[RMDB]
RNA sequence: GGGAACGACUCGAGUAGAGUCGAAAAAUCUAUUUGAUCUCAUCCAUCUAAUAAUAAUACUAUAUUACAGUCUGUACAUAAUGUAUAGAGAGGAGGAAGCACAUGGGAAUGGGGCUUUGAAGAUGGAGAUAUUCAUGUGACCCGCACAUGUCCUCUAGAGUUUUAGGGUAUUCGUACCCUAAAACUCAAAAGAAACAACAACAACAAC
Reactivity to 2A3 in 0.01 (KOAc 150mM, MgCl2 10mM, bicine 150mM(pH8.5), 24C), signal-to-noise 1, nucleotides 027 to 156: a000u150c150u090a250u240u030u150g070a070u000c010u030c070a090u000c050c030a010u000c030u000a010a010u090a120a030u270a180a100u150a300c030u110a190u070a230u300u140a050c040a030g120u000c000u060g050u080a030c000a010u300a160a110u300g000u010a070u010a000g040a010g070a040g000g070a010g050g000a070a000g000c070a110c030a120u120g040g000g100a080a040u100g070g030g020g020c000u050u100u030g080a010a000g010a000u040g080g000a030g000a040u120a050u090u150c000a000u010g010u010g000a050c010c010c000g110c030a000c000a040u000g040u060c000c030u070c030u000a100
The record gives the reactivity of an RNA of 207 nucleotides to 2A3. Reactivities are given for positions 27 through 156.